[RMDB]
This 177-nucleotide RNA was probed chemically with 2A3 and DMS. DMS adducts were read by reverse transcription with MarathonRT. Reactivities are given for positions 27 through 126. The DMS profile rests on 1,104 reads. The RNA was probed in 150 mM KOAc, 10 mM MgCl2 and 150 mM bicine (pH 8.5) at 24 C.
RNA sequence: GGGAACGACUCGAGUAGAGUCGAAAACUGGCCAGCACCAACCCGCGGGUGACUAGCCGGUAAUCACGAGUGAUCCGGUGCCACGCGGCCUCAUACGACGCCGGUGUGUCGUCGACGAUGGCGCUCACGUCUGGGGAUGUUUCGACAUCCCCAGACGAAAAGAAACAACAACAACAAC
Reactivity to 2A3 in 0.01 (KOAc 150mM, MgCl2 10mM, bicine 150mM(pH8.5), 24C), signal-to-noise 1, nucleotides 027 to 126: c020u000g020g010c000c020a000g010c010a000c010c000a040a110c050c030c010g080c120g020g010g040u020g040a300c000u000a010g030c000c000g000g020u030a050a040u170c050a050c260g090a060g080u080g010a040u080c030c000g050g050u050g010c000c000a030c060g060c000g000g000c000c020u140c020a190u280a140c060g030a050c070g090c080c030g060g010u070g050u010g000u020c010g040u030c060g000a140c020g070a080u090g040g000c010g000c020u000c020a120
Reactivity to DMS in 0.01 (KOAc 150mM, MgCl2 10mM, bicine 150mM(pH8.5), 24C), signal-to-noise 1, nucleotides 027 to 126: c030u010g010g030c030c070a030g000c010a010c000c000a050a170c030c010c020g030c180g010g000g000u010g020a120c020u000a120g020c000c000g030g000u000a080a080u000c090a070c110g000a100g000u000g000a080u000c010c000g000g020u000g020c030c010a080c080g010c020g000g030c020c010u020c030a080u020a050c110g030a100c130g000c020c010g000g030u020g000u030g000u020c120g000u000c030g000a060c090g000a050u000g000g000c030g000c030u040c130a100